[RMDB]
RNA sequence: GGGAACGACUCGAGUAGAGUCGAAAACAGAGAUUAUGAUCUGGGGAAUAGGCUUCCCCGCACUUAAUGGGCUUAGUUAGGUGACGAUGCUCCAACCGCGAAGCUAUACUAUACCUCCGAUCCAUCCACCUCGGUUCCAAUUCGUUGGAACCGAGGUAAAAGAAACAACAACAACAAC
Reactivity to 2A3 in 0.01 (KOAc 150mM, MgCl2 10mM, bicine 150mM(pH8.5), 24C), signal-to-noise 4, nucleotides 027 to 126: c020a010g170a000g070a080u140u100a060u300g070a040u030c040u040g000g000g040g040a020a050u050a120g120g020c020u030u000c000c010c000c000g000c020a070c020u080u080a070a050u140g050g100g010c020u040u070a030g000u050u010a080g010g080u080g050a060c050g050a080u170g000c010u070c090c000a050a070c040c020g010c040g020a000a000g030c000u050a070u050a240c010u030a010u090a120c000c000u000c000c020g000a020u000c010c040a030u010c020c010
Reactivity to DMS in 0.01 (KOAc 150mM, MgCl2 10mM, bicine 150mM(pH8.5), 24C), signal-to-noise 1, nucleotides 027 to 126: c000a110g000a170g000a090u030u000a050u000g040a090u020c000u020g000g000g000g000a030a070u000a090g000g020c290u000u020c050c050c040c000g040c070a000c110u000u000a000a020u010g000g000g000c040u000u060a130g040u000u010a000g040g010u000g030a060c060g000a040u010g000c030u090c000c040a130a110c070c010g030c170g000a000a000g000c040u030a300u080a150c000u010a060u070a120c040c000u010c100c090g000a000u000c000c170a090u000c000c080